[RMDB]
An RNA of 177 nucleotides, treated with 2A3 and DMS and read out base by base. The RNA was probed in 150 mM KOAc, 10 mM MgCl2 and 150 mM bicine (pH 8.5) at 24 C. It was measured as part of the RMDB library TTRDEL. 2A3 adducts were read by reverse transcription with SuperScript II with manganese. Values cover nucleotides 27 to 126.
RNA sequence: GGGAACGACUCGAGUAGAGUCGAAAAGAUAUGGACCUCCCUUUUGACGCCUGGUAGUCGGAAACGACUAGAAGGGCGAUAAGGAAGGUCCUAAGUCAAAAGCUAUGGAUCUUCGGAUCCAUAGCAACAUGCAUGGUAUGUUCGCAUACCAUGCAUGAAAAGAAACAACAACAACAAC
Reactivity to 2A3 in 0.01 (KOAc 150mM, MgCl2 10mM, bicine 150mM(pH8.5), 24C), signal-to-noise 4, nucleotides 027 to 126: g000a020u050a040u090g000g010a000c010c000u000c000c010c020u010u030u030u070g260a120c070g010c000c010u100g100g170u040a010g000u010c000g030g000a040a030a020c000g000a030c010u010a060g050a090a090g040g000g000c030g000a020u040a010a010g000g010a000a000g030g000u000c000c000u010a010a010g030u010c020a020a040a040a130g000c000u010a000u010g010g000a000u000c020u090u150c300g090g000a000u000c000c010a000u000a000g000c000a000a000
Reactivity to DMS in 0.01 (KOAc 150mM, MgCl2 10mM, bicine 150mM(pH8.5), 24C), signal-to-noise 6, nucleotides 027 to 126: g010a030u000a300u000g000g010a010c010c000u000c020c000c000u000u000u000u010g020a140c070g020c010c010u000g000g020u000a010g010u000c010g010g000a080a040a110c000g020a010c000u000a020g000a300a240g000g000g010c010g010a060u000a020a010g000g010a010a010g000g000u000c000c000u000a000a050g010u000c040a090a080a110a130g010c000u000a000u000g000g000a010u000c000u000u010c210g020g000a000u000c000c000a000u000a000g010c000a030a030